[RMDB]
RNA sequence: GGGAACGACUCGAGUAGAGUCGAAAAGACCGAUUCCUCAAUGGACCGAGUGCUCCGCAAUAGAACAGGCGACCUGUACCUGCGCCUAUAGAGGACCAAGCACAGUGCAGGAUGAAGAAUCGGUUGAAGACUCAGAGCUGUUCGCAGCUUUGAGUCUAAAAGAAACAACAACAACAAC
Reactivity to 2A3 in 0.01 (KOAc 150mM, MgCl2 10mM, bicine 150mM(pH8.5), 24C), signal-to-noise 9, nucleotides 027 to 126: g030a000c000c000g000a010u000u000c010c000u010c010a020a100u070g060g060a060c020c040g160a080g060u030g010c010u020c030c020g040c080a060a090u070a100g060a080a030c030a030g010g020c030g070a150c040c070u110g040u110a060c000c020u030g020c020g070c020c010u070a070u070a070g110a040g020g010a010c040c120a050a000g000c000a010c000a020g000u060g030c010a010g040g130a090u070g020a010a010g000a000a000u000c000g000g000u000u010g000a010
Reactivity to DMS in 0.01 (KOAc 150mM, MgCl2 10mM, bicine 150mM(pH8.5), 24C), signal-to-noise 8, nucleotides 027 to 126: g000a030c010c010g000a010u010u000c010c050u000c020a070a130u010g000g000a070c030c070g010a150g010u010g000c020u010c040c010g010c120a120a040u010a030g020a300a150c050a030g000g010c080g000a130c230c110u010g000u040a300c030c050u000g000c080g020c090c000u020a040u010a080g020a110g020g000a100c130c150a130a080g000c000a020c080a090g000u000g020c010a040g000g010a150u000g020a030a030g000a010a010u000c000g000g010u000u000g010a080
Background:
The record gives the reactivity of an RNA of 177 nucleotides to 2A3 and DMS. Conditions: 150 mM KOAc, 10 mM MgCl2 and 150 mM bicine (pH 8.5), 24 C. DMS adducts were read by reverse transcription with MarathonRT. For 2A3 the reverse transcriptase was SuperScript II with manganese. Source: RMDB library OK1LIB, as collected in RNAgym. The 2A3 profile rests on 41,441 reads. DMS (dimethyl sulfate) methylates the pairing face of unpaired adenines and cytosines.